Annotation: Conditions: 150 mM KOAc, 10 mM MgCl2 and 150 mM bicine (pH 8.5), 24 C. An RNA of 177 nucleotides, treated with 2A3 and DMS and read out base by base. 2A3 adducts were read by reverse transcription with SuperScript II with manganese. Values cover nucleotides 27 to 126.
[RMDB]
RNA sequence: GGGAACGACUCGAGUAGAGUCGAAAACAGUAAAAGUAGCAACAGUGGUGAUUAAUAGCCUGAUAGGGUGCUGCAGAGGCCCACUGUAUUGCUACUAAAGGUCUCUGCAGACGAUGAAAGACAUCGAGCAGGACGUACUAUUCGUAGUACGUCCUGCAAAAGAAACAACAACAACAAC
Reactivity to 2A3 in 0.01 (KOAc 150mM, MgCl2 10mM, bicine 150mM(pH8.5), 24C), signal-to-noise 2, nucleotides 027 to 126: c040a010g110u210a000a200a000a010g040u010a000g020c010a040a040c010a010g010u000g060g090u150g060a100u060u200a100a090u040a080g020c000c000u020g050a040u070a090g150g000g010u180g000c000u000g000c000a000g010a000g050g000c040c000c000a000c030u000g020u040a120u230u190g000c000u000a000c000u000a030a030a000g010g000u000c000u030c000u000g000c010a020g010a210c020g000a000u000g010a060a030a030g020a010c060a000u020c000g000a030
Reactivity to DMS in 0.01 (KOAc 150mM, MgCl2 10mM, bicine 150mM(pH8.5), 24C), signal-to-noise 1, nucleotides 027 to 126: c050a090g000u070a060a160a080a150g080u000a000g040c020a070a060c000a000g000u000g000g000u000g010a300u020u020a070a090u050a150g060c020c000u060g000a180u040a130g030g000g010u020g010c030u000g020c060a010g000a000g000g060c030c000c070a010c050u000g010u040a040u030u010g040c020u020a000c050u030a090a030a080g010g000u000c000u040c000u000g000c020a010g040a040c000g000a000u000g000a100a260a130g010a220c000a000u000c000g010a180